[RMDB]
RNA sequence: GGGAACGACUCGAGUAGAGUCGAAAAACAUGGCGGUGACAUACACCGGAAAACCGUAGAGAUACGGUCCGCCUUGUAGUCGGUGUACAGGUGGUGCAAGCCUGUCGUCAGGUAAUGUCGUGCGCUGAGUUAUAUUGUAAUUCGUUACAAUAUAACUAAAAGAAACAACAACAACAAC
Reactivity to DMS in 0.01 (KOAc 150mM, MgCl2 10mM, bicine 150mM(pH8.5), 24C), signal-to-noise 8, nucleotides 027 to 126: a080c110a110u030g000g020c000g020g010u010g020a060c070a080u010a080c110a080c020c000g000g000a040a050a070a050c000c000g010u000a000g000a240g000a200u000a010c000g000g000u000c020c020g010c030c020u020u020g010u020a070g000u010c020g000g010u010g010u030a030c040a020g010g010u000g000g000u040g020c180a090a210g010c000c000u000g000u000c030g000u000c040a060g000g000u010a070a030u010g000u000c010g010u010g000c020g010c020u000g000
Reactivity to 2A3 in 0.01 (KOAc 150mM, MgCl2 10mM, bicine 150mM(pH8.5), 24C), signal-to-noise 4, nucleotides 027 to 126: a000c060a070u100g020g000c010g000g040u050g020a000c000a020u140a030c050a040c030c000g010g020a080a100a000a010c000c000g000u000a010g010a000g000a040u010a010c000g000g000u010c000c010g030c000c000u010u120g080u040a040g020u030c030g000g000u030g000u010a010c010a010g000g020u030g020g070u150g080c050a020a020g000c000c000u000g010u010c010g030u010c030a010g020g010u050a040a010u040g000u010c010g010u050g030c010g000c010u020g000